[RMDB]
RNA sequence: GGGAACGACUCGAGUAGAGUCGAAAAGAUAUGGAUGGUACUGCGCUACAGUAGCUCGGAAACGAGCACACUGUAGAACUACGCGCGUACCAUCCUAAGUCAAAACUAGCAUGUUCGCAUGCUAGAAGACACUACUGGACUUCGGUCCAGUAGUGUCAAAAGAAACAACAACAACAAC
Reactivity to DMS in 0.01 (KOAc 150mM, MgCl2 10mM, bicine 150mM(pH8.5), 24C), signal-to-noise 1, nucleotides 027 to 126: g020a010u020a120u010g000g010a010u000g000g010u000a010c030u000g050c020g060c000u020a030c000a010g010u000a080g020c000u010c000g000g000a020a000a030c000g010a010g030c010a020c150a120c010u000g000u000a050g000a090a070c270u000a090c280g070c020g010c080g030u000a020c000c000a010u000c010c000u010a000a070g000u000c000a110a060a080a220c010u020a010g010c000a010u000g010u010u010c250g060c000a020u000g020c000u000a000g000a100a070